[RMDB]
Structure probing data (2A3 and DMS) for a 170-nucleotide construct.

RNA sequence: GGGAACGACUCGAGUAGAGUCGAAAAACCUGUGAGUGGAAACCCGCUUUAUUCACUGGGGACGACAACUCUGGGGAGAGAAGGGAGGGUCGGAUGGGAAGAGUAAAUCCUACGGGAAUCCCCCGGUAUACACACUCGUUCGCGAGUGUGAAAAGAAACAACAACAACAAC
Reactivity to 2A3 in 0.01 (KOAc 150mM, MgCl2 10mM, bicine 150mM(pH8.5), 24C), signal-to-noise 4, nucleotides 027 to 129: a010c020c010u050g000u000g040a000g010u050g010g020a020a080a070c030c020c000g010c040u070u110u080a150u070u110c070a060c100u090g000g010g000g050a010c030g020a010c040a130a040c020u040c030u070g000g010g050g030a090g010a020g020a060a060g020g040g080a110g020g030g040u040c060g040g020a060u090g050g010g020a050a020g050a020g040u090a040a040a000u040c000c000u030a030c060g000g010g000a010a060u040c000c000c000c000c000g000g000u060a040u070a030
Reactivity to DMS in 0.01 (KOAc 150mM, MgCl2 10mM, bicine 150mM(pH8.5), 24C), signal-to-noise 2, nucleotides 027 to 129: a120c050c010u000g030u060g030a090g000u030g020g030a070a120a100c020c010c010g040c170u000u030u020a090u010u030c110a090c100u020g010g010g000g000a060c130g000a130c170a100a090c100u020c010u000g000g000g000g000a020g040a040g000a080a140g000g000g000a050g010g100g000u020c110g020g000a110u000g000g000g000a070a000g010a080g030u000a070a090a060u040c020c000u000a090c100g000g000g000a030a050u040c040c000c010c020c020g050g040u050a050u060a120
2A3 adducts were read by reverse transcription with SuperScript II with manganese. Reactivities are given for positions 27 through 129. The RNA was probed in 150 mM KOAc, 10 mM MgCl2 and 150 mM bicine (pH 8.5) at 24 C.